[RMDB]
Chemical mapping of a 177-nucleotide RNA with DMS and 2A3.
DMS adducts were read by reverse transcription with MarathonRT.
In probing experiments dimethyl sulfate is read out at A N1 and C N3, which are open when not base-paired.
2A3 adducts were read by reverse transcription with SuperScript II with manganese.
For DMS, 13,109 sequencing reads were counted.

RNA sequence: GGGAACGACUCGAGUAGAGUCGAAAAGACACGCUUAGCAGAUGACCUCCUCGUUGGUGAGUGUCGGUAAUGUUGUCAGUCACAGGCAACAGUUAACGAUCUGCUUAAAUAAAAAGAGAAGAACAAAGGGAUUAUUAGUAUUCGUACUAAUAAUCCCAAAAGAAACAACAACAACAAC
Reactivity to DMS in 0.01 (KOAc 150mM, MgCl2 10mM, bicine 150mM(pH8.5), 24C), signal-to-noise 6, nucleotides 027 to 126: g000a020c030a020c030g030c040u020u030a040g020c010a010g010a010u000g000a050c010c000u010c060c020u000c110g000u050u020g000g020u010g000a100g000u010g010u010c000g000g000u010a100a070u010g000u000u000g020u000c010a080g000u020c280a110c300a140g000g000c010a010a000c020a020g010u030u020a040a020c010g010a020u010c000u010g000c010u000u040a050a060a080u060a050a060a070a090a110g010a120g000a100a070g010a090a080c170a060a110a170
Reactivity to 2A3 in 0.01 (KOAc 150mM, MgCl2 10mM, bicine 150mM(pH8.5), 24C), signal-to-noise 6, nucleotides 027 to 126: g020a000c020a000c070g060c060u080u110a000g000c010a000g000a030u030g030a030c010c000u010c000c000u110c070g140u140u190g010g030u060g040a060g000u060g000u010c000g000g020u110a080a060u020g000u010u000g000u010c030a050g160u150c070a050c050a130g030g000c000a010a000c000a020g010u020u060a020a010c030g010a010u000c000u020g000c000u000u050a030a070a010u110a040a050a020a040a000g130a010g050a140a020g050a060a020c050a080a100a080